[RMDB]
RNA sequence: GGGAACGACUCGAGUAGAGUCGAAAAUUGUUAGUCUCUCAUCAAUAUUGAGUAGUUGUGGUUCAACAACAUUUGUACUAGCUAACUUUGAAUCUUAUAUUUCGCCCUUAUUGCUAGAAAGAGUACAGUAGGAAGGUGAUUUCGAUCACCUUCCUACAAAAGAAACAACAACAACAAC
Reactivity to 2A3 in 0.01 (KOAc 150mM, MgCl2 10mM, bicine 150mM(pH8.5), 24C), signal-to-noise 1, nucleotides 027 to 126: u020u040g040u000u020a050g040u000c000u000c000u010c090a090u000c020a230a090u060a140u080u090g000a000g050u110a090g000u040u010g030u000g180g150u120u090c050a050a000c000a010a000c000a040u100u080u220g000u030a000c010u030a010g000c000u030a000a030c000u000u080u140g040a020a010u070c120u250u050a080u020a080u290u100u010c000g050c000c000c000u100u130a190u190u120g030c020u080a020g100a030a030a030g090a000g020u050a060c020a060
Reactivity to DMS in 0.01 (KOAc 150mM, MgCl2 10mM, bicine 150mM(pH8.5), 24C), signal-to-noise 2, nucleotides 027 to 126: u000u020g010u000u000a010g010u030c020u000c000u000c010a070u010c180a100a070u020a110u010u000g020a050g030u000a110g000u000u000g020u000g030g000u000u010c170a140a050c040a010a030c060a130u010u000u000g030u000a040c020u010a090g030c030u000a010a020c060u010u000u010g000a060a060u000c240u000u020a080u000a080u000u000u000c130g010c030c010c030u010u000a050u000u020g040c120u010a090g020a050a060a100g000a060g030u000a000c110a100
The record gives the reactivity of an RNA of 177 nucleotides to 2A3 and DMS. For 2A3 the reverse transcriptase was SuperScript II with manganese. For 2A3, 517 sequencing reads were counted. The reactions ran in a buffer of 150 mM KOAc, 10 mM MgCl2 and 150 mM bicine (pH 8.5), at 24 C.